[RMDB]
Overview: Conditions: 150 mM KOAc, 10 mM MgCl2 and 150 mM bicine (pH 8.5), 24 C. Chemical mapping of a 207-nucleotide RNA with 2A3 and DMS. For DMS, 4,907 sequencing reads were counted.

RNA sequence: GGGAACGACUCGAGUAGAGUCGAAAACACCCUUUGCGGCCUCACCAAUCUUAUUAAACCACAGACAUGCUUACAUCCCCCUAAAUCGCAUUGGUAGGAUAAGCGAUGUGUGGCCUUAUUCCUUAGGUUUUGAUCUGAGCAGAUACCCAAAUACUCACUAAUCCUUUUAGUUCGCUAAAAGGAUUAGAAAAGAAACAACAACAACAAC
Reactivity to 2A3 in 0.01 (KOAc 150mM, MgCl2 10mM, bicine 150mM(pH8.5), 24C), signal-to-noise 2, nucleotides 027 to 156: c080a010c000c000c000u030u050u160g060c060g000g020c000c020u040c040a000c000c030a060a040u030c030u090u070a090u040u120a230a090a030c020c020a040c020a060g180a130c050a110u030g030c010u080u080a130c110a300u300c050c010c000c000c000u080a090a120a080u190c040g000c060a030u070u030g020g000u030a030g000g040a000u010a020a010g000c040g030a080u020g030u000g000u010g030g000c000c000u060u040a040u090u090c000c000u060u070a050g020g040u050u040u020u100g060a060u010c050u040g030a000g030c090a030g030a120u150a060c000c010c020a060a090a020u120a090c010u020c020a010
Reactivity to DMS in 0.01 (KOAc 150mM, MgCl2 10mM, bicine 150mM(pH8.5), 24C), signal-to-noise 2, nucleotides 027 to 156: c050a130c030c010c010u000u010u010g030c120g040g000c030c040u000c030a010c030c010a060a070u000c040u000u000a080u010u010a100a100a080c040c020a050c020a090g000a130c050a070u000g030c020u000u030a100c030a120u000c000c000c030c010c020u030a040a140a100u000c100g040c110a210u000u000g020g010u000a110g000g020a060u010a030a080g010c040g020a080u010g030u000g000u000g000g030c030c040u010u000a090u000u000c050c010u000u000a070g010g000u010u010u010u020g000a060u000c040u000g020a070g040c020a040g010a160u010a090c020c010c020a050a090a110u000a090c020u030c030a290

2A3 adducts were read by reverse transcription with SuperScript II with manganese.